RNA sequence: GGGAACGACUCGAGUAGAGUCGAAAAGAUAUGGACGUAGGGAGCUCAGCAUCGGAAACGAUGUGGGAGCGAGGAUCUACCGUCCUAAGUCAAAACGAGAUAUUACCCUUCGGGGUAAUAUCUCGAAGUGUAGACUGGUGUUCGCACCAGUCUACACAAAAGAAACAACAACAACAAC
Reactivity to DMS in 0.01 (KOAc 150mM, MgCl2 10mM, bicine 150mM(pH8.5), 24C), signal-to-noise 1, nucleotides 027 to 126: g000a040u000a300u000g010g010a020c020g020u000a010g000g000g000a050g020c000u010c010a300g000c010a030u060c000g000g000a060a040a190c000g010a000u000g010u000g000g050g000a010g020c000g010a050g010g000a020u000c010u000a050c200c160g000u030c000c010u000a050a120g000u000c050a070a070a150a230c070g000a000g000a090u000a000u000u000a000c000c000c000u000u040c190g010g000g020g000u000a000a000u000a000u000c000u000c000g010a000a030
The record gives the reactivity of an RNA of 177 nucleotides to DMS. DMS adducts were read by reverse transcription with MarathonRT. The reactions ran in a buffer of 150 mM KOAc, 10 mM MgCl2 and 150 mM bicine (pH 8.5), at 24 C.